[RMDB]
RNA sequence: GGGAACGACUCGAGUAGAGUCGAAAAAGAAUCAGCGGAUGAGUUGUGGUUAGGGGUGAAAUGCCACUCGAACCCAGAGCUAGCUGGUUCUCCCCGAAAUGCGUUGAGGCGCAGCAGUUGACUGGACAUCUAGGGGUAAAGCACUGUUUCGGUGCGGCAAUCCGCUAAUGUUCGCAUUAGCGGAUUGAAAAGAAACAACAACAACAAC
Reactivity to DMS in 0.01 (KOAc 150mM, MgCl2 10mM, bicine 150mM(pH8.5), 24C), signal-to-noise 2, nucleotides 027 to 156: a040g000a030a030u000c010a020g000c010g020g010a090u000g000a100g030u000u000g000u020g040g020u000u000a100g010g000g000g040u010g020a060a090a140u020g020c070c020a020c020u000c020g000a050a070c100c000c010a070g000a060g020c040u000a100g020c020u000g010g010u000u000c010u000c020c000c000c070g000a100a080a060u000g000c010g020u020u000g010a220g000g010c030g000c030a080g000c030a100g030u000u000g010a100c050u000g010g000a060c040a060u000c030u010a190g010g030g010g000u000a050a050a140g020c050a010c000u000g010u000u000u010c050g020g000u010g010c040g000g020
Reactivity to 2A3 in 0.01 (KOAc 150mM, MgCl2 10mM, bicine 150mM(pH8.5), 24C), signal-to-noise 3, nucleotides 027 to 156: a010g000a000a000u020c000a000g010c020g110g130a180u130g050a110g100u080u030g060u160g120g000u040u040a080g000g030g000g050u010g010a110a150a120u270g050c050c010a050c010u030c020g020a020a010c010c000c010a020g000a000g060c020u010a030g000c000u000g000g000u000u000c010u040c010c000c000c000g050a080a070a040u100g010c020g000u050u090g050a060g010g060c020g000c030a010g000c010a010g010u090u090g060a080c030u060g010g050a020c010a040u020c060u060a040g020g020g000g000u100a050a080a000g000c000a010c030u030g050u130u150u160c100g020g000u040g030c000g020g000

Description
This 207-nucleotide RNA was probed chemically with DMS and 2A3. Reactivities are given for positions 27 through 156. For DMS the reverse transcriptase was MarathonRT.